Annotation
This 177-nucleotide RNA was probed chemically with DMS and 2A3. The RNA was probed in 150 mM KOAc, 10 mM MgCl2 and 150 mM bicine (pH 8.5) at 24 C. For DMS the reverse transcriptase was MarathonRT. In probing experiments dimethyl sulfate is read out at A N1 and C N3, which are open when not base-paired. For 2A3 the reverse transcriptase was SuperScript II with manganese.
RNA sequence: GGGAACGACUCGAGUAGAGUCGAAAAUGCAAUGGUUUCGACGGGGCAUGAGGAGGGUGACUGAAGCCUGCUCGGUCAGAGCGAACCCGUAACAGCGAACAACAUCGUUCGUUUCUCCCGUCAAGCCACUUACGGGUAGUUUCGACUACCCGUAAGUAAAAGAAACAACAACAACAAC
Reactivity to DMS in 0.01 (KOAc 150mM, MgCl2 10mM, bicine 150mM(pH8.5), 24C), signal-to-noise 7, nucleotides 027 to 126: u030g010c150a110a120u020g000g010u010u000u000c120g020a010c000g010g000g000g000c240a080u010g000a120g010g020a260g000g000g010u010g000a130c140u010g020a080a110g010c030c030u010g010c030u020c030g000g020u020c110a130g000a110g010c060g000a100a050c010c000c000g000u010a080a100c240a070g000c010g000a000a010c010a100a160c260a100u020c180g020u000u000c010g000u000u000u000c050u000c010c010c000g000u000c010a040a020g010c000c010
Reactivity to 2A3 in 0.01 (KOAc 150mM, MgCl2 10mM, bicine 150mM(pH8.5), 24C), signal-to-noise 7, nucleotides 027 to 126: u200g000c070a040a110u040g000g000u010u010u080c070g000a000c010g000g010g030g030c100a060u220g050a040g080g080a080g020g000g020u050g050a040c040u110g060a080a010g030c000c020u010g000c040u040c060g050g050u300c100a010g020a010g020c030g020a030a040c000c000c000g030u060a090a020c000a040g000c000g000a010a000c010a040a040c030a230u220c130g000u000u000c010g000u000u020u010c020u010c000c000c000g000u000c000a000a010g010c000c000